[RMDB]
RNA sequence: GGGAACGACUCGAGUAGAGUCGAAAACUUCACCGCGUCGACGUUGCCGAUCUCCAUGUCAUGCCUCCCUGGUUCGCUCUUCGAUGCACUCCGGGUCGUCGCACCGGCAGUGCAUGUCUCCGCAGUCCUAUGAUUUUCGUUUCGACGAAAAUCAUAGAAAAGAAACAACAACAACAAC
Reactivity to 2A3 in 0.01 (KOAc 150mM, MgCl2 10mM, bicine 150mM(pH8.5), 24C), signal-to-noise 3, nucleotides 027 to 126: c020u080u070c020a040c070c020g030c040g010u020c010g020a060c030g070u070u090g010c000c010g030a100u030c010u000c020c030a060u090g090u100c040a090u200g070c010c000u030c010c000c010u020g060g000u020u040c010g000c020u020c000u080u060c050g060a020u020g020c010a000c010u020c010c020g040g000g030u050c050g030u040c040g000c010a050c000c010g000g030c080a010g000u000g010c000a010u020g020u000c030u000c030c020g010c030a020g050u030c000
Reactivity to DMS in 0.01 (KOAc 150mM, MgCl2 10mM, bicine 150mM(pH8.5), 24C), signal-to-noise 6, nucleotides 027 to 126: c120u000u000c040a110c060c030g010c080g010u010c030g020a080c070g010u000u010g030c050c030g010a080u000c040u000c020c030a080u000g010u000c060a090u000g010c050c030u000c010c010c010u000g000g010u000u000c050g010c040u000c040u000u000c080g010a050u000g000c040a020c010u000c010c020g010g000g020u000c080g020u000c080g000c070a170c010c010g000g010c130a020g020u000g000c000a020u000g000u000c030u010c040c050g010c140a090g000u000c080